[RMDB]
RNA sequence: GGGAACGACUCGAGUAGAGUCGAAAACGCUAUCAAGAUCUGGACGGGAAUGAGCAGACUGAGGAAUCCGACGGACUGCUUGCCGUCUGCCAUCAGCACGAAAUCGACCAGCUUGACGGCAUAUUCACUAUCGGUACCUAUUCGUAGGUACCGAUAGAAAAGAAACAACAACAACAAC
Reactivity to 2A3 in 0.01 (KOAc 150mM, MgCl2 10mM, bicine 150mM(pH8.5), 24C), signal-to-noise 6, nucleotides 027 to 126: c050g000c010u010a020u040c010a020a000g010a070u080c010u020g010g020a010c020g020g030g110a120a150u080g020a050g050c060a020g110a130c020u050g010a030g010g060a100a100u050c050c050g080a050c090g050g030a050c040u130g050c000u140u140g060c020c010g000u000c020u000g020c000c010a140u090c010a020g070c060a020c110g090a040a040a040u100c010g030a050c010c000a000g010c000u010u010g010a010c020g010g000c030a030u070a140u160u120c080a040
Reactivity to DMS in 0.01 (KOAc 150mM, MgCl2 10mM, bicine 150mM(pH8.5), 24C), signal-to-noise 4, nucleotides 027 to 126: c230g020c020u000a060u000c010a010a020g000a120u000c020u000g000g010a100c010g030g010g010a120a070u000g000a150g020c020a010g010a090c000u000g000a090g000g000a080a050u010c060c080g020a120c190g000g000a050c080u000g000c060u000u010g010c110c130g000u000c020u000g030c030c040a040u000c040a080g010c100a170c110g000a040a060a100u020c030g010a080c010c010a030g000c010u000u000g000a010c020g020g000c010a090u000a070u000u000c090a130
Structure probing data (2A3 and DMS) for a 177-nucleotide construct. 2A3 adducts were read by reverse transcription with SuperScript II with manganese. Values cover nucleotides 27 to 126. For 2A3, 9,249 sequencing reads were counted. It was measured as part of the RMDB library OK2TST.